[RMDB]
RNA sequence: GGGAACGACUCGAGUAGAGUCGAAAACACAUGUUCAAGUUCAUGCAUACAGCCUAGAGGUGCCGUGAUGAAUUUCAAGAUACUGAAAGAACUAGGUUUUACUCUCUUAAAUCUUGGACACAUGGACCACCAAAGAGCGAUUCGUCGCUCUUUGGUGAAAAGAAACAACAACAACAAC
Reactivity to 2A3 in 0.01 (KOAc 150mM, MgCl2 10mM, bicine 150mM(pH8.5), 24C), signal-to-noise 1, nucleotides 027 to 126: c070a000c010a000u030g000u080u040c040a030a010g010u010u000c020a030u030g040c000a030u060a240c040a070g000c000c040u060a000g000a050g070g000u050g010c000c000g090u040g010a190u020g010a110a240u030u040u000c010a060a030g030a170u110a190c030u040g070a090a040a050g010a070a030c020u060a080g010g000u010u050u030u110a050c050u060c000u000c000u000u070a120a150a020u020c030u010u040g020g010a010c000a010c040a060u050g000g040a030c010
Reactivity to DMS in 0.01 (KOAc 150mM, MgCl2 10mM, bicine 150mM(pH8.5), 24C), signal-to-noise 1, nucleotides 027 to 126: c090a100c110a070u000g050u020u000c030a000a040g020u000u010c040a030u000g020c130a090u000a070c170a060g030c020c040u000a040g010a110g020g000u000g030c000c030g000u010g010a060u000g000a060a050u000u000u000c040a030a050g000a050u010a060c100u000g000a060a070a050g000a120a150c040u020a050g010g010u000u000u000u010a090c170u010c070u000c030u010u000a080a020a060u010c010u000u000g020g020a030c060a040c080a160u020g000g010a060c080
This 177-nucleotide RNA was probed chemically with 2A3 and DMS.
It was measured as part of the RMDB library OK2TRN.
The DMS profile rests on 905 reads.